The data come from the RNA Mapping Database (RMDB), library M2RFPK. This 207-nucleotide RNA was probed chemically with 2A3. For 2A3 the reverse transcriptase was SuperScript II with manganese. The RNA was probed in 150 mM KOAc, 10 mM MgCl2 and 150 mM bicine (pH 8.5) at 24 C. The 2A3 profile rests on 1,130 reads.

RNA sequence: GGGAACGACUCGAGUAGAGUCGAAAACGGCAAAAAAGCAAACUUGACCACCAAGGAUAAAAGAGAUCUUAUCCAAGGAGGCAAAAGAUAAUCUCACUUUUGACACCCACUGAUCUCGAACUUAAAGAAAACCGAGACUACUUCGGUAGUCUCGGAACGGUAAAGCCAAGUUCGCUUGGCUUUACCGAAAAGAAACAACAACAACAAC
Reactivity to 2A3 in 0.01 (KOAc 150mM, MgCl2 10mM, bicine 150mM(pH8.5), 24C), signal-to-noise 2, nucleotides 027 to 156: c060g050g000c070a000a020a000a000a120a080g150c120a170a100a100c090u120u080g050a160c010c010a000c010c000a030a020g010g000a030u020a030a020a060a020g020a000g000a020u010c010u060u030a020u000c030c000a010a030g030g000a010g000g000c000a000a080a000a000g030a030u130a160a210u150c060u020c070a040c030u000u000u010u090g050a040c050a030c050c050c000a090c090u100g000a010u020c020u020c030g040a120a080c040u190u230a210a110a000g120a030a110a010a000c010c000g000a000g000a000c000u000a000c000u000u010c080g080g000u000a000g000u000c000u000c000g000g000a000a000